[RMDB]
RNA sequence: GGGAACGACUCGAGUAGAGUCGAAAACAGGAUUACAGUAUGCCGCCAUUACUGCACCUUAUGUAGUUCUCACUGGCUUAGGUGAGUCCUUUAAGAAAGUUGCAACCAUACCGUAUAAGGUUUGCAAGUACAUGGUAGUUCGCUACCAUGAAAAGAAACAACAACAACAAC
Reactivity to DMS in 0.01 (KOAc 150mM, MgCl2 10mM, bicine 150mM(pH8.5), 24C), signal-to-noise 9, nucleotides 027 to 129: c070a090g000g030a120u030u030a030c030a010g010u000a060u020g020c080c070g050c090c080a060u020u010a030c040u000g020c080a060c060c020u010u040a050u000g030u040a050g030u020u030c030u000c010a010c030u000g020g030c150u050u060a090g000g000u000g000a040g000u030c050c030u010u030u010a070a070g020a090a080a070g020u020u010g000c040a050a080c060c060a060u000a080c070c090g030u000a100u030a070a060g020g010u020u020u020g000c010a000a040g000u030a090
Reactivity to 2A3 in 0.01 (KOAc 150mM, MgCl2 10mM, bicine 150mM(pH8.5), 24C), signal-to-noise 9, nucleotides 027 to 129: c050a010g040g030a060u100u130a050c010a020g060u050a030u100g050c020c030g040c040c020a050u050u090a050c020u020g010c020a030c010c010u070u050a070u170g130u080a050g010u040u030c030u000c020a030c020u040g120g060c030u140u160a040g000g020u010g010a010g010u020c010c000u080u120u100a110a060g070a090a100a040g060u070u040g010c000a010a010c010c010a040u090a120c030c030g060u110a080u050a180a050g030g000u050u040u070g020c020a010a040g010u020a040
Structure probing data (DMS and 2A3) for a 170-nucleotide construct. Reactivities are given for positions 27 through 129. The RNA was probed in 150 mM KOAc, 10 mM MgCl2 and 150 mM bicine (pH 8.5) at 24 C. Source: RMDB library 15KLIB, as collected in RNAgym.